[RMDB]
RNA sequence: GGGAACGACUCGAGUAGAGUCGAAAAGAUAUGGAAGUCCUAUUGUCAGUCGAGAUUGUCGGAAACGACAGCACCGACUUGGAUUUAUAGGAGCUUCCUAAGUCAAAGCUUAAGUUCGCUUAAGCAACACAAUAACAAAGUUCGCUUUGUUAUUGUGAAAAGAAACAACAACAACAAC
Reactivity to 2A3 in 0.01 (KOAc 150mM, MgCl2 10mM, bicine 150mM(pH8.5), 24C), signal-to-noise 7, nucleotides 027 to 126: g010a030u100a040u180g000g010a000a000g020u040c000c000u010a020u010u030g020u010c020a010g010u000c000g010a020g030a300u040u040g010u020c000g010g030a070a070a090c010g010a010c000a010g010c030a020c080c020g010a010c000u020u150g120g010a020u220u300u210a020u020a010g050g020a090g120c000u010u010c000c000u000a090a010g020u010c050a160a090a050g000c000u010u020a010a000g010u060u170c300g080c190u000u000a000a010g030c020a070a030
Reactivity to DMS in 0.01 (KOAc 150mM, MgCl2 10mM, bicine 150mM(pH8.5), 24C), signal-to-noise 9, nucleotides 027 to 126: g010a050u010a300u010g000g010a010a010g010u000c000c000u000a000u000u000g000u000c010a030g010u000c000g010a220g010a100u010u000g020u000c010g010g010a130a140a230c010g010a010c000a010g010c300a090c060c010g000a010c000u010u000g030g000a020u010u010u000a010u000a010g000g000a100g020c000u000u000c000c000u000a030a120g000u010c050a140a140a140g000c000u000u000a010a010g010u000u020c300g020c010u000u000a010a000g010c010a140a230